An RNA of 207 nucleotides, treated with 2A3 and DMS and read out base by base. The data come from the RNA Mapping Database (RMDB), library RNAMAK. For DMS, 1,627 sequencing reads were counted. As a SHAPE reagent, 2A3 marks flexible, mostly unpaired nucleotides at the ribose 2'-OH. The reactions ran in a buffer of 150 mM KOAc, 10 mM MgCl2 and 150 mM bicine (pH 8.5), at 24 C. For 2A3 the reverse transcriptase was SuperScript II with manganese. The 2A3 profile rests on 711 reads.
RNA sequence: GGGAACGACUCGAGUAGAGUCGAAAACCACAUUCGUGUGGGGAGUAUCCUAAGUCCAGGACGUUGAAAGAAAGACAUGGCUUGGUAUCGGAAACGAUACCAGUGGCCAACAGCUUUCUGGAGUCCUGGAUAUGGACGGGCAGUCUUUCGAGACUAAUGCACAACAGUGAUUCGUCACUGUUGUGCAAAAAGAAACAACAACAACAAC
Reactivity to 2A3 in 0.01 (KOAc 150mM, MgCl2 10mM, bicine 150mM(pH8.5), 24C), signal-to-noise 1, nucleotides 027 to 156: c060c000a000c010a050u090u210c250g090u000g000u010g000g020g030g070a060g080u050a120u060c000c000u020a230a000g060u070c000c000a000g040g000a000c000g220u280u020g020a010a010a000g000a000a000a000g000a020c150a190u030g000g000c090u080u060g040g000u000a000u010c000g000g070a050a050a050c000g000a000u000a000c000c020a000g030u190g020g040c000c000a010a030c010a000g030c000u000u000u020c000u000g020g030a000g000u030c000c000u000g000g000a000u000a000u010g000g030a000c050g000g100g110c050a010g020u000c000u000u200u120c100g050a000g010a040c040u090a140a050
Reactivity to DMS in 0.01 (KOAc 150mM, MgCl2 10mM, bicine 150mM(pH8.5), 24C), signal-to-noise 1, nucleotides 027 to 156: c000c000a060c010a090u000u010c210g020u020g020u010g000g000g020g010a120g000u010a040u000c000c000u000a100a180g090u000c000c030a070g000g020a020c010g030u000u010g030a280a210a090g020a030a040a010g000a030c070a300u010g000g000c000u000u010g000g050u000a010u000c000g000g000a130a200a290c000g040a060u000a020c000c000a040g050u000g020g010c050c000a000a090c050a110g020c000u000u000u010c000u000g000g000a170g000u000c040c030u010g010g000a000u000a030u000g000g010a040c000g000g000g000c070a140g020u000c030u010u000u000c210g000a050g010a020c080u000a160a190